Description: Structure probing data (DMS and 2A3) for a 177-nucleotide construct. Values are in units of 0.01, from 0 to 300, in steps of 10. Conditions: 150 mM KOAc, 10 mM MgCl2 and 150 mM bicine (pH 8.5), 24 C.

RNA sequence: GGGAACGACUCGAGUAGAGUCGAAAAAGCUUUGAGGCGUUUUCGAUAGCCACCAACUACUUCAGCGCCCGCCCCAGAGCGGCCCGCCAGCGCCCCGCGCGCACGAACGCACUUUACGCCUAGGGAAAUGGCAUUUAUAGUUCGCUAUAAAUGCCAUAAAAGAAACAACAACAACAAC
Reactivity to DMS in 0.01 (KOAc 150mM, MgCl2 10mM, bicine 150mM(pH8.5), 24C), signal-to-noise 3, nucleotides 027 to 126: a100g000c020u000u000u010g000a100g020g010c000g020u000u010u000u010c040g010a070u010a070g020c030c040a080c070c060a110a180c040u010a030c050u000u010c160a030g020c050g020c120c070c030g020c050c010c010c030a080g000a070g000c030g000g010c060c030c020g020c070c090a090g000c030g000c020c040c060c120g010c090g020c030g000c030a060c070g020a060a080c070g000c030a070c090u000u010u000a090c070g000c000c000u000a080g000g020g010a080a100
Reactivity to 2A3 in 0.01 (KOAc 150mM, MgCl2 10mM, bicine 150mM(pH8.5), 24C), signal-to-noise 2, nucleotides 027 to 126: a040g090c100u120u150u160g070a150g030g020c020g010u030u020u020u030c060g040a070u100a080g040c040c020a040c060c000a040a040c010u050a020c000u080u070c020a040g020c000g000c050c000c020g030c000c000c000c020a060g040a010g020c020g000g040c000c000c000g020c040c020a040g020c010g020c030c010c010c080g050c010g000c010g000c000a010c070g040a090a000c010g020c000a030c000u050u030u060a040c020g040c000c000u040a040g060g060g000a010a220